Notes: This 170-nucleotide RNA was probed chemically with 2A3 and DMS. The RNA was probed in 150 mM KOAc, 10 mM MgCl2 and 150 mM bicine (pH 8.5) at 24 C. Reactivities are given for positions 27 through 129. The DMS profile rests on 18,645 reads.
RNA sequence: GGGAACGACUCGAGUAGAGUCGAAAACAGAUUUUAUCGCUUGGCAAAUGAGUGUGCUCAGGUGCUAAGCGAAUAUGUUCUAUGUGGUGGUGGUUACUACGUCAAACCUGGAGGUACCAGUAGCGGAAAACAAGUUGCUUCGGCAACUUGAAAAGAAACAACAACAACAAC
Reactivity to 2A3 in 0.01 (KOAc 150mM, MgCl2 10mM, bicine 150mM(pH8.5), 24C), signal-to-noise 4, nucleotides 027 to 129: c020a030g100a050u040u100u060u200a170u070c000g020c000u000u000g010g000c000a000a000a050u000g000a000g020u250g020u250g220c010u030c030a010g020g000u000g000c000u000a010a010g000c000g010a010a010u070a020u010g030u010u010c040u060a060u100g020u040g060g020u020g010g000u040g020g000u030u020a040c030u010a000c080g030u040c060a090a070a030c000c000u040g080g070a050g100g010u050a100c000c010a050g030u060a030g020c010g030g000a030a090a000a040
Reactivity to DMS in 0.01 (KOAc 150mM, MgCl2 10mM, bicine 150mM(pH8.5), 24C), signal-to-noise 3, nucleotides 027 to 129: c110a050g070a000u020u020u010u010a000u020c030g020c030u000u000g030g060c010a000a000a000u020g010a000g040u060g040u070g000c030u010c000a010g010g000u000g000c020u020a000a040g000c010g010a000a030u020a100u040g030u020u070c060u030a100u020g020u030g000g000u040g000g000u040g030g020u000u000a000c000u000a060c070g000u040c060a030a080a090c070c000u000g030g010a050g050g030u050a080c070c030a060g020u000a050g040c020g020g020a120a000a110a180